[RMDB]
RNA sequence: GGGAACGACUCGAGUAGAGUCGAAAAGACAAUUGUCCGAGUGUCGAUCCGGUAGUUCGACAUGUGGUUAACACUAAUCGACGACGCCGUCACCGAGCUGCGGCGACAUGAUCUUCGUCGAUACGCCCGUUCCAAAGACAUUCGUGUCUUUGGAACGAAAAGAAACAACAACAACAAC
Reactivity to DMS in 0.01 (KOAc 150mM, MgCl2 10mM, bicine 150mM(pH8.5), 24C), signal-to-noise 5, nucleotides 027 to 126: g000a070c050a170a110u010u010g010u010c020c040g000a190g020u000g000u000c010g010a040u010c060c070g020g000u000a100g020u000u000c030g010a010c050a050u000g000u000g000g010u010u010a090a120c110a070c080u010a130a100u010c000g010a010c020g000a060c060g010c080c060g010u010c040a040c050c070g000a260g000c140u010g010c060g010g000c020g020a060c110a080u020g000a090u010c100u000u000c030g010u000c000g010a030u000a070c160g010c050c030
Reactivity to 2A3 in 0.01 (KOAc 150mM, MgCl2 10mM, bicine 150mM(pH8.5), 24C), signal-to-noise 6, nucleotides 027 to 126: g040a020c050a090a300u150u140g060u040c000c030g040a060g030u040g030u020c010g010a030u030c040c050g090g150u230a120g000u030u020c010g020a010c040a040u120g090u110g020g100u140u220a140a030c050a020c100u110a080a050u000c000g000a000c000g010a020c040g010c000c020g060u140c020a040c100c120g090a060g040c110u090g040c040g000g010c030g010a020c020a100u260g070a120u080c080u070u010c040g000u000c000g000a010u030a050c020g020c000c000